[RMDB]
RNA sequence: GGGAACGACUCGAGUAGAGUCGAAAAGAUUCCUCGUUGUUGAGCGAGGUUUAAACAAAUCGACCACACAAACGUAGAGCCGACUACGGAUUUAUAAAUCAAGGCAUUAAGUGUGAUAAGGAGACAAAAAACGAUGUUGUGUUCGCACAACAUCGAACAGCAUAGCGUUGUUCGCAACGCUAUGCUGAAAAGAAACAACAACAACAAC
Reactivity to DMS in 0.01 (KOAc 150mM, MgCl2 10mM, bicine 150mM(pH8.5), 24C), signal-to-noise 1, nucleotides 027 to 156: g070a160u020u050c010c010u000c020g020u000u000g000u000u000g000a140g080c020g000a130g010g010u030u020u000a060a090a040c210a060a120a110u000c010g000a070c010c000a080c010a240c010a090a070a120c050g030u000a060g030a280g100c090c010g010a050c000u000a020c020g000g000a250u000u000u000a060u000a040a080a010u010c070a060a170g010g010c060a130u000u000a010a180g000u000g090u000g040a140u020a030a090g030g000a290g010a030c130a000a030a040a030a020a020c010g020a020u010g030u000u010g060u000g030u000u010c300g090c000a030c000a000a010c000a000u000c000g000a050a080
Reactivity to 2A3 in 0.01 (KOAc 150mM, MgCl2 10mM, bicine 150mM(pH8.5), 24C), signal-to-noise 3, nucleotides 027 to 156: g090a100u200u140c000c000u020c000g000u000u010g000u010u000g000a010g000c020g000a000g010g020u020u200u060a020a020a000c050a000a000a040u000c000g000a010c020c000a020c000a000c000a050a180a000c010g010u010a000g000a010g050c020c030g040a020c010u000a020c010g000g000a010u000u240u050a230u160a080a030a070u150c140a000a000g000g020c010a000u110u240a150a040g000u000g000u010g020a010u030a070a090g110g040a070g030a030c180a040a130a020a060a020a020c010g010a000u000g000u000u000g000u000g010u020u040c190g080c010a010c020a000a000c000a010u010c010g000a000a010